[RMDB]
RNA sequence: GGGAACGACUCGAGUAGAGUCGAAAAGACGGAAAAGAUCGAACCUAAGAAGAUCAGGGAGUGUAAGCCGAAUCCUAGGGCUCCUAGGGACGCAUCGUCGGAUGCGAAAUAAACACUAACGUCGAAAGCUAGCGUAAUAUUUCGAUAUUACGCUAGCAAAAGAAACAACAACAACAAC
Reactivity to 2A3 in 0.01 (KOAc 150mM, MgCl2 10mM, bicine 150mM(pH8.5), 24C), signal-to-noise 4, nucleotides 027 to 126: g010a010c030g090g000a060a060a050a060g020a020u060c020g040a080a110c000c030u060a080a050g100a040a010g010a070u050c020a030g090g080g000a060g010u070g030u090a090a050g070c000c020g090a020a020u060c010c010u030a030g060g020g100c030u060c020c000u020a020g010g000g010a020c000g000c000a010u020c000g260u060c080g110g000a000u000g020c000g010a070a020a040u120a010a110a020c030a000c030u090a070a010c030g030u030c010g030a070a030a020
Reactivity to DMS in 0.01 (KOAc 150mM, MgCl2 10mM, bicine 150mM(pH8.5), 24C), signal-to-noise 5, nucleotides 027 to 126: g000a030c020g000g000a060a060a140a120g000a000u000c000g000a100a180c150c080u070a110a100g010a090a170g000a020u010c030a140g000g000g020a040g010u010g000u000a070a100g010c150c130g020a100a070u030c010c000u000a030g000g000g040c150u060c030c020u000a030g010g000g010a200c040g010c010a000u000c000g000u000c300g000g000a010u000g010c000g000a040a060a050u020a090a070a060c050a010c020u000a120a110c020g010u010c040g020a090a110a100